[RMDB]
RNA sequence: GGGAACGACUCGAGUAGAGUCGAAAAUUCAUAAGAGCGUAACCCCAGGGCUAAAGGAAAAUUCCACUCUUCAGCAGAGUGAUGCGUCUGUUCUUGGUCAUCCUCCCAAGUAAUUAUGUGCCGUGCUUAAGCUUUGAGCUUUGCACUUGGACUGAACUCUACCUAAUGACUUCGGUCAUUAGGUAGAAAAAGAAACAACAACAACAAC
Reactivity to DMS in 0.01 (KOAc 150mM, MgCl2 10mM, bicine 150mM(pH8.5), 24C), signal-to-noise 3, nucleotides 027 to 156: u000u000c060a130u000a060a140g010a080g020c030g030u010a080a130c020c000c010c020a140g020g020g040c030u000a060a060a090g030g000a060a060a070a150u010u000c030c010a030c010u030c010u000u000c110a130g000c080a090g000a130g010u000g030a100u010g000c100g020u000c030u010g010u000u010c040u000u010g010g000u000c030a070u020c040c040u000c020c000c020a050a160g000u000a080a100u010u010a090u000g020u010g010c030c070g030u000g000c010u020u000a020a080g010c020u000u000u010g010a120g020c010u000u000u010g010c000a020c010u010u000g000g010a170c060u010g000a060a110c120
Reactivity to 2A3 in 0.01 (KOAc 150mM, MgCl2 10mM, bicine 150mM(pH8.5), 24C), signal-to-noise 4, nucleotides 027 to 156: u090u030c040a050u110a190a030g010a010g020c030g020u060a030a070c010c000c010c040a050g000g030g000c030u100a040a100a110g110g000a110a080a020a020u200u050c020c000a010c010u030c020u140u120c070a110g050c060a000g060a000g040u040g020a030u080g040c020g050u070c020u030g040u020u080c010u010u050g040g000u020c030a070u030c030c030u040c020c000c000a020a020g030u100a080a120u160u120a100u130g080u100g050c010c010g010u000g000c030u120u120a020a000g010c030u130u180u300g080a020g000c000u020u010u010g010c010a000c000u020u070g000g000a010c010u010g010a020a030c020